[RMDB]
RNA sequence: GGGAACGACUCGAGUAGAGUCGAAAAUCAUGCAUGCCAGAGGGCGCCCGUGAUUUUUUACUGUGACUAAAAAAGUGUGACCAAAGCAGUCAUUCGACUUGAAUUAGAAAGCAUGGGAUAACAAAGGAGCAGCCUCUGGGCCACCGUUUCGGCUUUUCUAUAUGAUUUAGUUCGCUAAAUCAUAUAGAAAAGAAACAACAACAACAAC
Reactivity to 2A3 in 0.01 (KOAc 150mM, MgCl2 10mM, bicine 150mM(pH8.5), 24C), signal-to-noise 1, nucleotides 027 to 156: u130c020a050u150g020c010a060u120g060c000c000a000g010a010g130g030g030c020g020c000c010c000g050u070g050a210u020u130u060u120u100u190a190c040u040g040u050g110a050c050u130a040a040a040a040a040a040g000u010g000u000g020a000c000c000a100a240a150g070c010a080g010u010c010a040u080u100c070g070a020c070u100u080g050a080a100u050u020a060g000a070a160a000g000c010a000u040g000g040g010a020u050a170a020c070a130a160a130g090g000a210g020c080a020g010c000c000u000c000u010g010g010g010c000c070a080c090c030g050u070u110u160c110g030g040c010u020u000u010u030